[RMDB]
RNA sequence: GGGAACGACUCGAGUAGAGUCGAAAAUAUGAGUCAAGUGGCAGUAACAACAUUAGUUUUGAUUCAACUAGUCAAGGUGAAAAACCAUCCUAUGUGGUCGAGUUUACUAACUCUACCAACAUUGGCAUCUAAGCUGAGUCUUCGGACUCAGCUUAGAAAAAGAAACAACAACAACAAC
Reactivity to DMS in 0.01 (KOAc 150mM, MgCl2 10mM, bicine 150mM(pH8.5), 24C), signal-to-noise 1, nucleotides 027 to 126: u000a060u020g000a130g000u000c010a070a090g000u000g070g000c040a070g000u000a030a020c140a030a210c190a040u000u000a050g030u070u000u000u000g000a040u040u000c090a080a110c120u000a070g010u000c070a090a160g000g000u000g000a020a060a070a080a050c020c070a140u000c060c030u000a030u000g000u000g000g000u000c070g000a030g000u000u000u000a100c300u000a000a000c010u000c000u000a020c000c000a030a030c020a000u000u000g000g030c300a110
Source: RMDB library OK2TRN, as collected in RNAgym.
Structure probing data (DMS) for a 177-nucleotide construct.
For DMS, 621 sequencing reads were counted.
Reactivities are rounded to 0.1 and cut off at 0 and 3.
DMS adducts were read by reverse transcription with MarathonRT.